[RMDB]
The data come from the RNA Mapping Database (RMDB), library POS240. An RNA of 307 nucleotides, treated with 2A3 and DMS and read out base by base.

RNA sequence: GGGAACGACUCGAGUAGAGUCGAAAAGAAGUGAACGUGAGUUCACUUCACGCACGCUUCGGCGUGCGAACCGUUGCUUCGGCAACGGAAGCGUUACUACGGUAACGCAACCUACAGCUACGGCUGUAGGAACCUUCCGUACGCGGAAGGAAGAGUUCGACUACGGUCGAACUCAAGGAGAGUAGAUGAUUCGCGUUAAGUGUGUGUGAAUGGGAUGUCGUCACACAACGAAGCGAGAGCGCGGUGAAUCAUUGCAUCCGCUCCAUAGCGCAUUGUUCGCAAUGCGCAAAAGAAACAACAACAACAAC
Reactivity to 2A3 in 0.01 (KOAc 150mM, MgCl2 10mM, bicine 150mM(pH8.5), 24C), signal-to-noise 5, nucleotides 027 to 266: g000a000a000g000u000g000a000a010c050g070u100g130a090g010u040u000c000a000c000u000u000c000a000c000g000c000a000c000g000c000u060u090c290g150g000c010g000u010g000c020g010a030a010c000c000g010u000u000g000c010u030u070c290g150g000c000a000a000c000g010g020a030a030g000c000g000u010u000a000c020u020a020c170g150g000u000a000a000c000g000c010a010a090c010c000u000a000c000a000g000c000u030a070c270g160g000c000u000g000u000a000g000g000a010a010c000c000u000u000c010c000g020u030a030c300g030c010g120g000a000a000g010g000a020a040g000a000g000u000u000c000g010a010c010u040a030c240g090g000u000c000g000a000a000c000u000c010a000a020g010g000a000g000a010g000u010a000g000a000u010g000a000u000u010c000g000c000g020u020u090a020a010g010u010g000u000g000u000g000u000g010a020a010u010g000g000g010a010u020g040u090c110g000u000c020a010c000a000c000a010a010c030g020a020a000g010c030g020a050g010a010g040c010g000c000g000g040u010g000a000a000u010c000a000u010u010g000c000a000u000c010c010g000c010u000c010c010a100u180a060
Reactivity to DMS in 0.01 (KOAc 150mM, MgCl2 10mM, bicine 150mM(pH8.5), 24C), signal-to-noise 3, nucleotides 027 to 266: g010a020a020g000u010g000a000a020c000g000u030g000a250g020u000u000c000a000c010u000u000c000a150c020g010c010a010c000g000c000u000u030c250g030g010c000g000u000g030c020g010a070a140c010c000g010u010u000g000c000u000u010c210g020g020c010a000a000c000g000g000a070a070g020c000g000u000u000a000c010u000a130c210g030g010u010a000a010c000g000c010a060a050c020c000u000a010c010a000g010c000u000a130c210g030g000c000u000g000u000a010g000g010a050a050c010c010u000u000c010c000g020u010a100c250g060c010g010g000a030a010g000g000a060a090g000a010g010u000u000c010g010a010c010u000a090c160g050g020u000c000g000a000a000c000u000c050a030a090g000g010a010g010a020g010u010a300g000a020u000g000a020u000u000c010g010c000g020u000u030a020a050g010u000g010u000g010u000g010u000g000a030a040u010g000g020g000a010u000g010u020c160g000u000c010a000c000a010c020a010a050c100g010a070a060g030c010g000a170g020a170g000c000g000c060g010g000u000g000a020a020u010c030a010u000u010g000c020a010u000c010c010g000c010u000c000c010a130u010a130